[RMDB]
RNA sequence: GGGAACGACUCGAGUAGAGUCGAAAAACUAGUAUGUACAGGGGUGAGUUGACCUGUCAUCUAGACUGCUGACCAUCAACUCACCGGUCAGCUGUAUGAUGUCCACAGAGUACGACAUCAGUACUCAGUGUAAGGAAUCGUUCGCGGUUCUUUACACAAAAGAAACAACAACAACAAC
Reactivity to 2A3 in 0.01 (KOAc 150mM, MgCl2 10mM, bicine 150mM(pH8.5), 24C), signal-to-noise 9, nucleotides 027 to 126: a000c010u020a010g070u150a060u070g070u090a010c000a010g030g020g040g050u130g090a130g050u060u070g100a080c000c020u000g000u000c000a000u000c000u010a020g060a110c030u040g000c000u000g000a000c010c000a030u100c040a040a100c060u030c070a050c030c050g000g010u010c000a000g000c000u000g000u000a050u070g080a040u060g050u040c020c020a070c050a090g040a010g030u040a020c040g070a030c090a150u100c050a060g010u010a010c020u010c050a010
Reactivity to DMS in 0.01 (KOAc 150mM, MgCl2 10mM, bicine 150mM(pH8.5), 24C), signal-to-noise 9, nucleotides 027 to 126: a290c010u000a020g000u050a010u000g000u050a010c010a010g000g000g010g010u010g000a070g030u000u010g010a070c010c020u000g000u000c000a010u000c010u000a020g000a140c060u010g000c020u000g000a010c000c070a140u020c100a040a050c070u010c070a070c170c130g000g010u010c020a020g000c000u000g000u010a060u020g000a080u010g000u000c010c040a110c200a110g000a040g010u000a030c050g000a130c160a090u040c130a100g000u010a020c010u000c010a150
Conditions: 150 mM KOAc, 10 mM MgCl2 and 150 mM bicine (pH 8.5), 24 C. An RNA of 177 nucleotides, treated with 2A3 and DMS and read out base by base. The 2A3 profile rests on 121,137 reads. It was measured as part of the RMDB library OK1LIB. Reactivities are given for positions 27 through 126.